The record gives the reactivity of an RNA of 207 nucleotides to 2A3 and DMS. For DMS, 5,982 sequencing reads were counted. For 2A3 the reverse transcriptase was SuperScript II with manganese. Source: RMDB library OK3TST, as collected in RNAgym. Conditions: 150 mM KOAc, 10 mM MgCl2 and 150 mM bicine (pH 8.5), 24 C. For 2A3, 6,019 sequencing reads were counted.
RNA sequence: GGGAACGACUCGAGUAGAGUCGAAAACGCAUGCGAGAGCAUGCGGCUAAGCUUCGGCUUAGUAAGAGCAAAUUAGGAUUGUAGGCUCCCCGGCGUGUCUCGAACCAUGCCGGGCCAAACCCAUAGGGCUGGCGGUCCCUGUGCGGUCGAAAUUCAAUAAAUUAAUAUCGUUCGCGAUAUUAAUUUAAAAAGAAACAACAACAACAAC
Reactivity to 2A3 in 0.01 (KOAc 150mM, MgCl2 10mM, bicine 150mM(pH8.5), 24C), signal-to-noise 3, nucleotides 027 to 156: c010g010c000a000u000g000c010g010a050g010a010g050c000a000u000g000c000g010g000c000u000a000a000g000c000u010u150c300g080g000c000u010u000a000g000u030a070a030g010a000g010c020a010a060a150u110u060a100g030g030a040u020u070g040u070a040g000g050c000u010c000c000c000c000g000g000c000g020u010g020u020c080u060c300g050a040a030c020c000a000u010g000c000c000g000g000g000c000c000a020a010a000c000c000c000a000u010a000g010g010g010c030u030g070g070c070g040g030u090c000c000c000u020g000u000g000c130g040g000u030c030g060a030a020a010u080u050c040a030a070
Reactivity to DMS in 0.01 (KOAc 150mM, MgCl2 10mM, bicine 150mM(pH8.5), 24C), signal-to-noise 3, nucleotides 027 to 156: c010g040c010a000u010g010c020g030a300g000a270g030c000a020u010g010c000g020g020c000u000a010a030g010c010u000u000c300g060g010c000u000u010a020g000u000a060a110g000a150g010c040a060a060a150u010u000a130g020g000a070u000u000g010u000a180g000g010c010u000c060c050c000c000g010g010c000g020u000g010u000c080u000c200g010a160a190c240c000a030u000g030c010c000g020g010g010c040c050a040a050a080c020c010c020a070u010a070g010g010g030c010u020g010g000c020g020g000u000c020c000c010u000g050u000g020c050g040g030u000c010g010a090a050a080u000u000c020a070a270